[RMDB]
RNA sequence: GGGAACGACUCGAGUAGAGUCGAAAAGAUAUGGAGUCGAGAACGUGAUGACCGAUCAUGUGCGAAACUAUGUCGGAAACGACAUACCGAGUAGCACAUGAUCGCAAGCGUUCCGACUCCUAAGUCAGCUUAUACUUGAGUUCGCUCAAGUAUAAGCAAAAGAAACAACAACAACAAC
Reactivity to DMS in 0.01 (KOAc 150mM, MgCl2 10mM, bicine 150mM(pH8.5), 24C), signal-to-noise 5, nucleotides 027 to 126: g000a050u000a300u000g010g000a010g020u010c000g000a210g010a000a000c010g010u010g010a150u020g000a160c300c000g010a010u000c010a010u000g010u010g000c000g010a190a210a190c110u000a000u000g000u000c000g010g010a100a040a250c010g010a010c000a000u000a000c300c040g010a030g000u010a220g000c000a000c010a000u000g000a010u000c010g040c030a020a170g000c010g000u000u000c000c000g000a000c010u000c000c000u010a000a050g000u000c040a130
Reactivity to 2A3 in 0.01 (KOAc 150mM, MgCl2 10mM, bicine 150mM(pH8.5), 24C), signal-to-noise 6, nucleotides 027 to 126: g030a010u070a040u190g000g020a000g000u010c040g020a070g010a300a010c010g010u060g030a300u240g060a300c110c030g010a000u000c000a010u000g010u010g010c020g020a010a020a050c060u010a000u010g000u000c000g000g060a090a050a060c020g000a000c000a000u020a040c210c080g040a040g020u030a000g000c000a000c000a000u000g000a010u000c010g020c000a020a080g000c000g020u000u010c000c000g000a000c000u020c000c000u000a000a000g000u000c030a020